[RMDB]
An RNA of 207 nucleotides, treated with 2A3 and read out base by base. Conditions: 150 mM KOAc, 10 mM MgCl2 and 150 mM bicine (pH 8.5), 24 C.
RNA sequence: GGGAACGACUCGAGUAGAGUCGAAAAGACGGAGAACCUCUCGAAAGAGACUGACUCCGCUUCCUCCGGCCGCUCCCGUCUUCCGAGCUUCCUGCCGCUAGUCGAGCGGACAACUGGUAGCUCUCCCACUCUCUCAGAUUUUCUCUUGAGAGCGGGGCGCGAACAAGAUGUUCGCAUCUUGUUCGCGAAAAGAAACAACAACAACAAC
Reactivity to 2A3 in 0.01 (KOAc 150mM, MgCl2 10mM, bicine 150mM(pH8.5), 24C), signal-to-noise 2, nucleotides 027 to 156: g010a040c000g010g000a000g010a010a020c010c000u020c000u020c010g050a110a110a040g000a010g000a010c040u070g080a040c000u010c000c000g000c000u030u020c010c030u020c040c010g020g000c000c000g010c000u000c020c010c010g020u020c020u120u040c060c010g000a000g000c000u040u050c010c010u020g030c000c000g010c010u040a040g220u270c130g140a020g000c020g000g030a030c050a080a120c160u050g010g000u020a000g000c000u000c040u030c020c010c010a130c000u000c000u010c000u010c030a000g000a040u110u120u300u010c110u030c020u110u150g000a000g010a000g040c030g020g000g000g020